[RMDB]
RNA sequence: GGGAACGACUCGAGUAGAGUCGAAAAUAGCGGCAUCUACGUUAAAAGGUCCAGUUUAAUUAUAACUGCAAAAAAUAAUAACAAUUCUUACGCUUUAGCUGCUUAAUAGGCGCUUAACGUAGAUCCUCCUAGGCUUGUCCGUGGUCUAGAUCUGGGUAGUACCAUCAAGGUUCGCCUUGAUGGUACUAAAAGAAACAACAACAACAAC
Reactivity to 2A3 in 0.01 (KOAc 150mM, MgCl2 10mM, bicine 150mM(pH8.5), 24C), signal-to-noise 1, nucleotides 027 to 156: u210a030g100c090g000g040c090a020u000c000u030a020c030g020u000u060a100a000a000a000g070g010u010c040c000a000g000u020u000u020a260a200u150u110a130u060a140a050c030u000g020c010a010a000a000a040a180a070u230a040a010u090a140a000c010a070a040u130u080c000u080u200a080c090g050c070u060u060u040a010g030c110u150g000c020u150u080a060a070u210a260g000g020c000g000c060u010u000a000a000c000g000u000a000g000a000u010c030c000u090c010c000u040a040g000g000c050u040u110g060u120c120c080g050u010g010g000u010c000u000a030g000a110u080c040u140g000g000g070u070